Notes: This 207-nucleotide RNA was probed chemically with 2A3 and DMS. Reactivities are given for positions 27 through 156. 2A3 adducts were read by reverse transcription with SuperScript II with manganese. Values are in units of 0.01, from 0 to 300, in steps of 10. Source: RMDB library ARCHII, as collected in RNAgym. For 2A3, 2,513 sequencing reads were counted.
RNA sequence: GGGAACGACUCGAGUAGAGUCGAAAAGGCAUGCCGAGGUGCAGUGACCUCGUUAAUCACGCUGCAACAUUAUAGUUGCCAACGACGACAACUACGCACUCGCUGCUUAAAACCCAGUAGGGUGCCGUCUGACUGAAGCCGUGCUUGUGCGUUCAGAACUCAAUCACUAGUUCGCUAGUGAUUGAGUAAAAGAAACAACAACAACAAC
Reactivity to 2A3 in 0.01 (KOAc 150mM, MgCl2 10mM, bicine 150mM(pH8.5), 24C), signal-to-noise 4, nucleotides 027 to 156: g080g000c100a050u120g090c090c020g010a020g000g000u030g000c020a020g030u050g040a170c010c010u010c010g050u030u050a030a040u070c040a010c050g010c040u050g030c010a010a020c000a020u230u250a090u120a170g040u040u020g010c020c050a140a070c080g040a010c040g010a010c020a070a040c060u120a030c030g010c000a000c000u020c000g010c000u000g000c000u010u020a010a060a010a000c010c010c000a000g020u090a100g020g020g000u020g000c040c000g040u050c040u090g080a070c020u050g030a010a010g000c030c000g040u030g040c120u120u080g040u070g050c000g100u030u030c010a010g020a070
Reactivity to DMS in 0.01 (KOAc 150mM, MgCl2 10mM, bicine 150mM(pH8.5), 24C), signal-to-noise 2, nucleotides 027 to 156: g040g000c010a090u000g020c120c010g040a060g010g190u000g050c020a210g020u000g000a140c030c040u020c020g040u000u020a030a110u020c040a100c000g030c060u000g000c040a120a080c090a100u000u000a060u010a060g010u000u000g020c000c040a060a140c100g000a130c030g010a050c020a060a050c020u030a040c060g040c030a010c070u000c020g000c020u000g000c030u000u020a070a080a090a090c200c290c030a200g000u000a100g040g020g060u010g010c040c010g000u010c030u000g010a050c000u000g020a050a100g050c040c010g070u000g040c060u000u020g000u000g000c080g060u000u010c060a070g000a190